Chemical mapping of a 177-nucleotide RNA with DMS. The DMS profile rests on 936 reads. It was measured as part of the RMDB library OK2TRN. Reactivities are given for positions 27 through 126.

[RMDB]
RNA sequence: GGGAACGACUCGAGUAGAGUCGAAAAGUUUUAGCUUGGAAUAUUGCCUUGAUGCCAUCAGAAAAGCGUCAAGAUAUUCUAGAUGGAAUCUUUUCGGAAAUGGCCUCUGGGACUGACUUACAAGUUCAUAUGGACUGUUCUUCGGAACAGUCCAUAUAAAAGAAACAACAACAACAAC
Reactivity to DMS in 0.01 (KOAc 150mM, MgCl2 10mM, bicine 150mM(pH8.5), 24C), signal-to-noise 1, nucleotides 027 to 126: g000u000u000u000u000a070g000c010u000u030g030g000a030a020u000a060u020u010g000c080c010u000u000g010a080u000g000c000c020a130u000c080a270g010a030a010a080a060g000c050g030u000c010a020a080g010a100u000a040u020u000c000u000a040g010a040u000g020g000a090a040u000c000u000u000u000u000c000g020g040a090a180a030u010g030g020c010c020u000c020u000g010g010g020a030c080u000g010a110c250u010u010a050c020a030a030g000u000u000c160